Chemical mapping of a 207-nucleotide RNA with 2A3. Values cover nucleotides 27 to 156.
RNA sequence: GGGAACGACUCGAGUAGAGUCGAAAAAAGACUCAAUUAAAUAUAAAUGCAAACGAUGAAAACUUUGCUGGUGGGGAAGCUAUCGCUGCCUAAUAAGCACUUUAGUUAAACCAUCACUGUGUACUGGCCAAUAAACCCAGUAUCCCGUUCGACCGAGGUAUGUUCUACUGUUCGCAGUAGAACAUACAAAAGAAACAACAACAACAAC
Reactivity to 2A3 in 0.01 (KOAc 150mM, MgCl2 10mM, bicine 150mM(pH8.5), 24C), signal-to-noise 2, nucleotides 027 to 156: a010a000g090a060c060u050c070a070a100u250u180a170a180a070u300a080u090a200a130a030u110g010c010a070a010a040c080g030a010u160g050a080a030a120a130c020u110u080u040g000c060u000g020g000u000g010g050g000g000a050a000g000c000u000a000u000c010g120c270u000g000c000c000u060a110a030u220a100a040g000c000a000c010u010u000u000a010g020u060u030a040a000a010c000c000a000u000c010a000c030u070g010u000g000u010a000c000u000g000g020c000c060a140a240u150a160a030a050c010c000c000a000g020u000a030u010c010c010c050g050u060u040c000g050a070c030c060g000a020g190